Chemical mapping of a 177-nucleotide RNA with DMS and 2A3. Reactivities are given for positions 27 through 126. The reactions ran in a buffer of 150 mM KOAc, 10 mM MgCl2 and 150 mM bicine (pH 8.5), at 24 C. Source: RMDB library M2PK90, as collected in RNAgym.

[RMDB]
RNA sequence: GGGAACGACUCGAGUAGAGUCGAAAACAAUCUAAGCAAAAAUGUGAUCUAGCUUGUAAAUACAAUUUUGAGAGGUUAAUAAAUUACAAGUAGUGCUAUUUUUGUCCCUCUCUGCAAUAAAAUUAAAGAUGGAAUAUAUAUUCGUAUAUAUUCCAUCAAAAGAAACAACAACAACAAC
Reactivity to DMS in 0.01 (KOAc 150mM, MgCl2 10mM, bicine 150mM(pH8.5), 24C), signal-to-noise 2, nucleotides 027 to 126: c080a180a120u010c090u000a080a080g000c010a050a010a040a050a030u010g010u010g010a200u000c130u010a080g000c010u000u010g000u010a000a040a040u010a110c100a100a070u000u010u010u000g000a020g000a030g000g000u000u030a030a040u000a020a080a090u020u000a020c020a010a040g000u000a020g020u020g010c010u000a010u000u000u000u010u010g000u010c170c010c000u000c010u000c020u000g000c110a080a050u020a020a030a080a130u030u020a080a070a150
Reactivity to 2A3 in 0.01 (KOAc 150mM, MgCl2 10mM, bicine 150mM(pH8.5), 24C), signal-to-noise 2, nucleotides 027 to 126: c000a000a060u050c040u180a120a000g000c020a000a010a050a040a030u150g140u050g200a070u010c080u150a060g070c010u030u020g000u000a010a060a050u190a010c110a030a100u080u040u100u080g040a040g000a020g020g000u100u050a050a030u030a040a180a060u020u040a010c000a000a000g000u090a030g120u080g070c000u020a000u010u050u030u030u010g030u040c030c010c000u010c000u000c020u030g000c020a060a150u180a300a140a100a090u080u190a060a150a050
Overview
For DMS the reverse transcriptase was MarathonRT.